This 207-nucleotide RNA was probed chemically with 2A3 and DMS.
RNA sequence: GGGAACGACUCGAGUAGAGUCGAAAAGCGUAACGGCUGGGUGUAACCCAACUCUAGGUGUGCUGAUUAGCGGGCUUGACUCCGUAACAAAUAGGCACUGGUGGUAAAAAGCAUCCCACUUACUCACAAAGCUCCAAAUUCUUCGGAAUUUGGAGAAGCUUAUAGAUUUGUUCGCAAAUCUAUAAGCAAAAGAAACAACAACAACAAC
Reactivity to 2A3 in 0.01 (KOAc 150mM, MgCl2 10mM, bicine 150mM(pH8.5), 24C), signal-to-noise 4, nucleotides 027 to 156: g010c020g010u040a020a040c030g090g000c050u030g000g030g020u080g050u070a120a120c010c010c020a050a070c040u090c040u140a100g090g030u050g020u030g080c020u040g020a160u080u090a040g040c030g000g000g030c060u160u160g030a090c030u010c080c010g020u020a040a020c010a040a080a050u120a060g020g000c020a020c060u030g050g010u040g000g020u060a070a050a060a020a080g040c000a040u060c000c010c010a020c030u050u080a030c030u040c070a050c060a110a100a020g020c000u010c000c000a000a000a000u000u000c000u010u030c060g080g000a000a000u000u010u000g000g010a000g000a000a000
Reactivity to DMS in 0.01 (KOAc 150mM, MgCl2 10mM, bicine 150mM(pH8.5), 24C), signal-to-noise 1, nucleotides 027 to 156: g040c050g040u000a130a120c060g020g000c020u010g000g000g030u000g010u000a060a300c030c010c000a090a050c030u000c040u010a100g000g010u000g020u010g020c000u000g030a150u000u000a240g000c040g010g000g040c090u000u000g000a140c090u030c010c020g010u000a070a280c070a020a060a090u000a100g020g030c040a040c030u000g000g000u010g010g000u010a030a050a100a080a140g020c080a110u000c000c000c040a090c120u000u000a030c010u000c020a100c020a120a110a250g010c000u000c010c000a010a010a010u000u000c000u000u000c250g020g000a060a000u000u000u000g000g000a000g000a000a020

DMS adducts were read by reverse transcription with MarathonRT. The DMS profile rests on 2,090 reads. High 2A3 reactivity points to a flexible backbone, as in loops and unpaired stretches. Conditions: 150 mM KOAc, 10 mM MgCl2 and 150 mM bicine (pH 8.5), 24 C.